Conditions: 150 mM KOAc, 10 mM MgCl2 and 150 mM bicine (pH 8.5), 24 C. This 207-nucleotide RNA was probed chemically with 2A3 and DMS. The data come from the RNA Mapping Database (RMDB), library OK3TST.
RNA sequence: GGGAACGACUCGAGUAGAGUCGAAAAGAGCUAACAAAGAAGGUUCAGCAGUUAUGCGCUUUGAUGACUCAACACAGAAAAGUCAGCAACUAAUAUGAACUCUUCCACAAGGUUGCUACAAGAACAGGCAUUUGCAAAGCUUUCUUUUUUAAUUGCCCUCAUGAAUCCAUUUCGAUGGAUUCAUGAGAAAAGAAACAACAACAACAAC
Reactivity to 2A3 in 0.01 (KOAc 150mM, MgCl2 10mM, bicine 150mM(pH8.5), 24C), signal-to-noise 4, nucleotides 027 to 156: g040a000g000c020u040a030a040c020a080a040a010g030a030a010g020g030u120u030c040a020g020c030a010g020u090u130a070u150g010c080g050c040u060u050u070g080a070u050g030a040c020u040c180a100a060c090a040c030a110g080a100a080a020a000g030u030c040a010g000c010a010a010c020u060a030a130u090a070u210g040a070a040c020u050c040u300u020c030c020a040c030a090a030g040g000u010u010g000c000u030a070c040a080a030g060a100a010c030a070g070g000c010a010u040u030u130g010c050a100a060a040g000c020u060u070u000c000u030u090u040u030u050u150a100a110u090u100g040c000c000
Reactivity to DMS in 0.01 (KOAc 150mM, MgCl2 10mM, bicine 150mM(pH8.5), 24C), signal-to-noise 2, nucleotides 027 to 156: g020a100g030c020u000a080a160c090a110a150a090g000a070a080g040g040u000u000c050a300g020c060a150g000u000u000a030u020g010c020g020c000u020u000u000g000a270u000g000a130c030u010c050a090a120c110a140c160a210g000a110a100a050a050g000u000c010a140g000c020a020a090c020u010a060a150u000a120u000g000a010a040c110u010c060u000u000c000c110a090c020a080a140g000g000u000u000g020c000u000a130c080a060a110g000a070a140c050a070g010g010c010a070u000u000u000g040c100a080a080a150g000c030u000u000u000c000u000u000u000u000u000u070a050a130u000u010g000c010c010